This 207-nucleotide RNA was probed chemically with 2A3. As a SHAPE reagent, 2A3 marks flexible, mostly unpaired nucleotides at the ribose 2'-OH. It was measured as part of the RMDB library RFM130.
RNA sequence: GGGAACGACUCGAGUAGAGUCGAAAACUGUAAUUUCAGAUUCCUCCACUUUUAGUCCCUCAUUUUACAUGCCAUGUAUGUAGAUUCGGCUGAUGUGGUGGAAUGAGGGACCAAAAGUGGAAGAAUCUGAAAUUACAGAAAUGGAUCUUCGGAUCCACACUCAGGGAUUCUUCGGAAUCCCUGAGUGAAAAGAAACAACAACAACAAC
Reactivity to 2A3 in 0.01 (KOAc 150mM, MgCl2 10mM, bicine 150mM(pH8.5), 24C), signal-to-noise 2, nucleotides 027 to 156: c000u000g000u000a010a000u000u000u000c000a000g010a000u000u000c000c000u000c000c000a010c000u010u010u000u000a010g000u000c000c000c010u000c010a000u020u010u000u030a020c030a020u060g050c010c010a040u060g070u100a080u080g130u110a160g060a300u150u190c070g050g000c050u060g030a140u120g070u130g000g060u040g020g010a000a010u000g000a000g000g000g000a000c010c000a000a000a000a000g000u000g000g000a000a000g000a000a000u000c000u010g020a000a000a000u000u000a000c000a000g000a000a000a000u000g000g000a000u010c000u020u040c220g160g000a000u000c020c000a000
The reactions ran in a buffer of 150 mM KOAc, 10 mM MgCl2 and 150 mM bicine (pH 8.5), at 24 C.